[RMDB]
RNA sequence: GGGAACGACUCGAGUAGAGUCGAAAACAUUUAAAAUUUGCAUGAGUUCACAUAAAAAUCUGUAAUUCUAUCUCCUUAUGAAACUUACAAUCUGUCUUAUUGCAUGGCAAUGAUCAGCGGGAGCAGAGCAGGGCUGCUCCUUGAGACAGCUGUGUGAUCCUUUUACCAUCUUCGGAUGGUAAAAGGAAAAAGAAACAACAACAACAAC
Reactivity to 2A3 in 0.01 (KOAc 150mM, MgCl2 10mM, bicine 150mM(pH8.5), 24C), signal-to-noise 2, nucleotides 027 to 156: c010a000u060u180u240a090a180a050a120u180u110u170g030c040a040u050g010a010g070u100u120c070a030c010a060u160a080a070a050a040a070u150c140u050g040u040a000a160u070u000c010u090a090u040c090u060c030c030u020u120a090u120g030a080a060a030c060u080u100a030c090a090a100u040c080u020g070u010c000u040u030a060u090u040g020c000a040u000g010g050c040a090a240u110g020a280u010c040a040g050c000g040g000g000a000g000c000a000g010a060g040c040a010g000g090g000c000u000g000c000u000c000c000u010u000g000a000g010a030c010a010g020c010u040g010u000g000u010g010a010